[RMDB]
RNA sequence: GGGAACGACUCGAGUAGAGUCGAAAAAGAGCCGGAUACGUCCGGCUCAACGGGUGAUACGUGUGGUGCCGUCCGCUCCCCCUAUGGCAUAACAAAUGCACCACACACUAGGCUACGGCCUAGUGAAAAAAGGUGUAUGUGUUCGCACAUACACCAAUCGUACGUUCUAGUUCGCUAGAACGUACGAAAAAGAAACAACAACAACAAC
Reactivity to 2A3 in 0.01 (KOAc 150mM, MgCl2 10mM, bicine 150mM(pH8.5), 24C), signal-to-noise 1, nucleotides 027 to 156: a010g020a000g000c000c000g020g010a020u030a020c170g070u060c000c000g050g010c000u000c000a000a000c030g000g010g010u040g110a070u090a210c040g010u020g000u030g030g000u000g000c040c000g000u010c010c040g050c050u070c010c020c000c010c020u130a090u300g030g050c070a110u100a160a020c110a040a030a020u080g000c010a000c010c010a000c000a020c030a000c000u000a000g000g100c000u000a020c140g000g000c000c000u000a000g000u000g040a100a000a030a000a000a020g000g010u020g000u000a010u000g000u000g020u000u030c080g020c070a000c000a000u010a000c000a000c000c010a000a000
An RNA of 207 nucleotides, treated with 2A3 and read out base by base. The reactions ran in a buffer of 150 mM KOAc, 10 mM MgCl2 and 150 mM bicine (pH 8.5), at 24 C. For 2A3, 633 sequencing reads were counted. Reactivities are rounded to 0.1 and cut off at 0 and 3. 2A3 adducts were read by reverse transcription with SuperScript II with manganese. Source: RMDB library M2RFPK, as collected in RNAgym.